[RMDB]
RNA sequence: GGGAACGACUCGAGUAGAGUCGAAAAGUCCCGAGAUAGCCGCGUCCGAGGUUCCCAUUCAAAGGGGAGAGGGGGGGACUUGGAGCACAGGGGUCCAGUUCAGUCCGUGGGAUUACCCCGGAUCUCCUAACAAUAGCGUUCGCGCUAUUGAAAAGAAACAACAACAACAAC
Reactivity to 2A3 in 0.01 (KOAc 150mM, MgCl2 10mM, bicine 150mM(pH8.5), 24C), signal-to-noise 9, nucleotides 027 to 129: g040u020c000c000c000g000a030g010a030u080a010g040c040c050g020c070g020u010c000c000g010a030g020g010u030u020c000c000c010a030u080u100c080a090a090a030g010g010g040g010a110g010a050g010g020g010g010g000g000g010a010c000u030u090g030g010a020g010c080a020c060a110g000g010g020g020u040c050c010a020g020u080u130c010a030g050u010c030c040g070u220g020g020g020a170u090u300a300c000c000c000c000g000g000a020u010c020u020c010c000u040a070a050
Reactivity to DMS in 0.01 (KOAc 150mM, MgCl2 10mM, bicine 150mM(pH8.5), 24C), signal-to-noise 9, nucleotides 027 to 129: g000u030c050c010c020g000a030g000a090u040a020g010c000c030g020c130g030u010c000c000g010a060g000g000u000u000c000c030c040a090u030u050c180a050a110a110g040g010g020g010a090g010a150g010g010g010g000g000g020g000a050c050u020u010g010g010a050g020c240a090c130a090g000g000g000g000u020c110c070a060g000u000u000c060a130g000u030c020c020g000u000g000g010g000a200u050u050a150c030c000c010c000g000g000a030u020c020u000c010c000u030a090a180